Source information
Structure probing data (DMS and 2A3) for a 177-nucleotide construct. The 2A3 profile rests on 2,086 reads.

RNA sequence: GGGAACGACUCGAGUAGAGUCGAAAAUUUUAGUAGUUGGAGCAGGAUAAUUCACUACCUUUUCCAUAUUAAGAUAAUCAAGGAGAUUCGAAUGGAUAAUGAAAAUUCUUAGCCCCCUCCCAAGAAAACCUAUGGACGUAUUCGUACGUCCAUAGGUAAAAGAAACAACAACAACAAC
Reactivity to DMS in 0.01 (KOAc 150mM, MgCl2 10mM, bicine 150mM(pH8.5), 24C), signal-to-noise 2, nucleotides 027 to 126: u010u020u020u090a050g000u020a020g010u040u000g000g000a040g020c070a040g000g000a130u000a120a090u020u060c130a100c240u000a050c010c000u000u000u000u000c000c010a060u000a020u010u000a040a070g020a030u000a110a090u000c060a100a140g030g010a050g000a240u030u000c060g040a020a090u000g010g010a110u010a020a040u050g000a020a050a050a170u000u000c010u000u010a120g010c030c000c000c000c040u010c000c000c000a040a030g000a070a050a050
Reactivity to 2A3 in 0.01 (KOAc 150mM, MgCl2 10mM, bicine 150mM(pH8.5), 24C), signal-to-noise 4, nucleotides 027 to 126: u010u020u040u020a040g000u020a070g040u040u140g020g000a030g010c070a020g040g040a050u090a170a200u260u080c080a080c100u080a090c020c000u020u040u040u010c000c020a010u020a060u100u070a040a050g040a090u080a070a030u100c030a070a080g080g030a030g080a050u050u050c050g040a060a060u140g090g090a070u090a120a060u150g060a040a010a000a050u050u020c020u080u030a070g020c010c000c000c020c000u010c000c000c000a020a020g020a030a090a000